The record gives the reactivity of an RNA of 177 nucleotides to DMS and 2A3.
The reactions ran in a buffer of 150 mM KOAc, 10 mM MgCl2 and 150 mM bicine (pH 8.5), at 24 C.
For DMS, 35,822 sequencing reads were counted.
DMS adducts were read by reverse transcription with MarathonRT.
It was measured as part of the RMDB library OK2TRN.
RNA sequence: GGGAACGACUCGAGUAGAGUCGAAAAGUGUGUGCAGUGCAUGGUGCUGUGAGAUCAUGUGUGUGUGCAGUGCAUGGUGCUGUGAGAUCAGCGUGUGUGUGUGCAGUGCAUGGUGCUGUGAGUGUGACUAUCUUUAGGGUUUCGACCCUAAAGAUAGAAAAGAAACAACAACAACAAC
Reactivity to DMS in 0.01 (KOAc 150mM, MgCl2 10mM, bicine 150mM(pH8.5), 24C), signal-to-noise 7, nucleotides 027 to 126: g010u010g020u000g020u010g010c030a040g010u000g010c040a070u000g010g020u000g010c040u010g010u000g010a130g010a070u010c030a040u000g010u000g020u000g010u010g010u000g010c030a070g010u010g020c030a050u000g010g020u010g010c010u000g010u000g010a150g000a110u000c040a040g010c030g030u010g010u000g010u010g010u000g010u000g010c030a060g010u000g010c040a050u000g000g020u000g010c030u000g010u000g010a100g010u000g010u010g010a260
Reactivity to 2A3 in 0.01 (KOAc 150mM, MgCl2 10mM, bicine 150mM(pH8.5), 24C), signal-to-noise 7, nucleotides 027 to 126: g060u050g000u020g030u040g050c030a010g030u010g060c030a070u080g100g050u080g050c030u020g040u060g070a080g010a070u080c040a050u050g040u010g030u030g000u010g010u050g070c020a030g070u000g070c010a050u090g070g080u090g050c020u020g020u040g080a130g010a140u140c030a010g010c020g030u050g000u010g000u000g000u010g020u020g060c030a030g050u020g040c010a030u070g010g040u070g040c030u020g020u050g060a080g040u110g020u040g040a050